An RNA of 207 nucleotides, treated with 2A3 and read out base by base. The 2A3 profile rests on 482 reads. The data come from the RNA Mapping Database (RMDB), library VIROID.

RNA sequence: GGGAACGACUCGAGUAGAGUCGAAAACUUCUUCGAUUCGGAUCGGCUCAUCUCGACAAGAGGCGGCAGUCCUCAGUACUCUUACUCUUUUCUGUAAAGAGGAGACUGCUGGACGCGCCGCCCGAGUUCGAGCAUGGGCCAACUUCCGAACGAAGGGCUAUAGGGUGGCGUUCGCGCCACCCUAUAGAAAAGAAACAACAACAACAAC
Reactivity to 2A3 in 0.01 (KOAc 150mM, MgCl2 10mM, bicine 150mM(pH8.5), 24C), signal-to-noise 1, nucleotides 027 to 156: c000u160u120c010u010u040c040g270a300u010u000c010g010g000a040u040c070g000g000c030u000c010a000u000c000u010c000g000a020c050a080a050g090a150g110g000c000g000g000c000a000g000u010c000c010u010c000a040g000u130a300c030u000c000u040u130a220c000u050c020u070u190u150u170c150u300g300u300a000a000a000g010a000g010g010a000g010a000c000u010g070c060u010g000g000a000c010g040c030g040c040c000g020c000c000c010g030a070g030u160u000c020g000a000g000c050a000u010g000g010g010c000c000a000a000c000u010u020c010c000g000a000a000c000g000a000a000g000g020g000